[RMDB]
RNA sequence: GGGAACGACUCGAGUAGAGUCGAAAACGAAUUCCACGUUCAUUGUUAGAUGAAUAUCGUGAGGGAUUAUUGGUAGGUACAGCGUGUGAUGAAGGUGAAUUAUUUACGGCAGUUAUGCAGAAGGACCGUACAGUCUAUCUUUCGAGAUAGACUGUACAAAAGAAACAACAACAACAAC
Reactivity to DMS in 0.01 (KOAc 150mM, MgCl2 10mM, bicine 150mM(pH8.5), 24C), signal-to-noise 8, nucleotides 027 to 126: c100g000a090a120u010u000c030c010a100c110g010u000u000c020a030u000u000g010u010u020a120g010a020u010g020a040a040u010a110u010c090g030u000g010a110g020g000g000a070u000u010a090u010u010g010g000u000a030g010g010u010a050c080a060g010c050g020u000g020u000g000a050u000g010a060a080g000g010u000g010a060a070u010u000a100u010u000u000a060c110g010g020c030a040g010u000u000a050u000g010c050a050g010a090a060g000g010a110c150c140
Reactivity to 2A3 in 0.01 (KOAc 150mM, MgCl2 10mM, bicine 150mM(pH8.5), 24C), signal-to-noise 7, nucleotides 027 to 126: c020g040a020a060u070u020c010c010a020c050g010u030u020c020a030u030u080g230u290u270a120g020a080u040g020a050a050u070a080u170c090g000u040g060a140g020g020g020a020u000u070a050u110u150g100g010u040a060g030g020u080a050c030a030g010c040g030u050g030u040g060a050u040g020a040a020g070g020u060g020a040a050u160u080a090u090u170u070a030c020g030g000c000a020g010u080u070a080u130g020c030a000g020a100a020g060g030a010c020c040

An RNA of 177 nucleotides, treated with DMS and 2A3 and read out base by base. For 2A3, 9,331 sequencing reads were counted. The reactions ran in a buffer of 150 mM KOAc, 10 mM MgCl2 and 150 mM bicine (pH 8.5), at 24 C. The data come from the RNA Mapping Database (RMDB), library OK2TRN.